An RNA of 177 nucleotides, treated with DMS and 2A3 and read out base by base.
RNA sequence: GGGAACGACUCGAGUAGAGUCGAAAAUCACAAAGCGGAUUUAGCUCGGUUGGGAGAGGUCCAGACCGAGGAUCUGGCCAUCCUGUGUCCGAGACACAGAAUUCGCACCAUAAACAACGGGAGAUUCCCACUACCUCGUGUUCGCACGAGGUAGUGGAAAAGAAACAACAACAACAAC
Reactivity to DMS in 0.01 (KOAc 150mM, MgCl2 10mM, bicine 150mM(pH8.5), 24C), signal-to-noise 1, nucleotides 027 to 126: u000c100a090c250a110a090a100g040c020g090g000a000u010u000u000a300g000c000u000c000g010g030u100u040g040g030g050a120g000a160g000g000u010c000c000a100g000a010c000c070g030a300g000g000a000u000c000u000g000g010c000c010a250u000c050c000u000g000u040g000u030c000c050g000a000g000a170c120a000c010a260g000a000a000u000u000c000g000c060a260c000c090a050u060a000a070a040c200a170a170c200g000g000g000a060g030a060u060u040c150
Reactivity to 2A3 in 0.01 (KOAc 150mM, MgCl2 10mM, bicine 150mM(pH8.5), 24C), signal-to-noise 3, nucleotides 027 to 126: u080c000a000c040a100a090a000g000c000g000g030a000u010u020u070a040g000c000u010c000g110g000u110u240g090g000g000a040g080a190g000g000u180c030c000a000g020a050c010c080g120a230g100g050a070u000c000u000g020g000c000c000a000u000c000c000u070g040u010g060u070c020c000g040a000g140a040c040a000c000a020g080a000a030u000u000c000g020c020a090c030c010a040u250a120a130a000c030a030a090c010g070g020g000a130g000a020u040u110c010
For DMS the reverse transcriptase was MarathonRT. Conditions: 150 mM KOAc, 10 mM MgCl2 and 150 mM bicine (pH 8.5), 24 C. The DMS profile rests on 825 reads. It was measured as part of the RMDB library OK1LIB.